[RMDB]
RNA sequence: GGGAACGACUCGAGUAGAGUCGAAAAAAGUCACCCUCCUCGCAUCGCAAGUUCGUGCUUGCGACUUACACGUAGGGCGCGGGGUGGGCGAAAGUUGCCAUGAGACCGUAACUUUCGUAGUCAUUGAAAAACUACAAAGCCUUCGGGCUUUGUAGAACCAAUACGAUUAGUUCGCUAAUCGUAUUGGAAAAGAAACAACAACAACAAC
Reactivity to DMS in 0.01 (KOAc 150mM, MgCl2 10mM, bicine 150mM(pH8.5), 24C), signal-to-noise 2, nucleotides 027 to 156: a040a110g020u000c000a030c000c000c010u000c000c020u010c000g040c290a180u010c030g020c010a030a000g000u000u000c200g060u000g010c020u030u000g030c020g010a030c090u000u030a100c060a060c140g020u000a090g000g020g030c110g040c030g000g000g010g040u010g000g020g060c000g020a010a040a060g030u000u000g000c020c040a180u000g000a150g020a110c070c100g040u000a030a020c040u000u000u020c010g020u010a090g020u010c030a170u000u010g010a100a110a080a120a120c010u000a010c000a000a000a000g000c000c010u000u000c300g030g020g050c020u000u000u000g040u000a010g020a030a100
Reactivity to 2A3 in 0.01 (KOAc 150mM, MgCl2 10mM, bicine 150mM(pH8.5), 24C), signal-to-noise 3, nucleotides 027 to 156: a000a000g150u110c050a050c020c000c010u030c000c000u000c000g000c010a040u010c000g000c000a020a020g010u200u230c130g200u300g100c000u000u010g010c000g000a010c000u030u090a050c090a030c120g140u110a070g020g060g020c060g000c010g010g010g000g000u030g000g010g000c000g000a000a000a000g000u000u010g010c010c020a040u090g070a030g020a240c040c010g000u010a000a000c000u000u010u000c010g000u010a020g070u040c060a080u050u090g040a040a020a030a020a040c000u010a000c000a000a010a000g010c010c000u040u070c210g060g000g000c000u010u000u000g000u000a000g000a010a000